[RMDB]
RNA sequence: GGGAACGACUCGAGUAGAGUCGAAAACAGGUUAGUUUUACCCUACUGUUGUCAAUUAUUUACGUAAUAGUAGCAUGAUUUAGUACGAGAGGAACUGUCAUGCCUGAUCACUGGUCUGUAGGUUUAUGAACAGACGUUAAUUCGUUAACGUCUGUUCAAAAGAAACAACAACAACAAC
Reactivity to DMS in 0.01 (KOAc 150mM, MgCl2 10mM, bicine 150mM(pH8.5), 24C), signal-to-noise 4, nucleotides 027 to 126: c030a080g020g010u010u020a080g030u010u000u020u010a140c130c020c010u010a060c050u000g030u000u000g020u020c070a080a060u020u010a080u030u000u040a090c180g040u000a020a040u010a090g010u010a030g030c020a030u000g020a020u010u010u000a040g020u000a110c020g000a200g000a240g010g000a100a080c140u010g000u000c000a020u000g000c000c070u010g020a060u000c100a030c070u010g020g010u000c040u000g010u000a020g010g010u010u000u000a110u020
Reactivity to 2A3 in 0.01 (KOAc 150mM, MgCl2 10mM, bicine 150mM(pH8.5), 24C), signal-to-noise 4, nucleotides 027 to 126: c020a030g030g120u080u110a060g030u020u100u030u180a160c010c000c000u010a020c060u040g070u170u020g030u090c050a050a040u150u070a120u080u210u090a050c070g040u070a040a050u090a170g050u080a020g000c010a010u010g000a020u050u040u070a010g010u020a000c000g010a020g010a060g130g030a020a010c000u000g000u000c010a010u000g000c010c020u020g060a040u070c020a010c040u030g020g060u030c040u060g020u010a040g000g120u070u030u080a100u100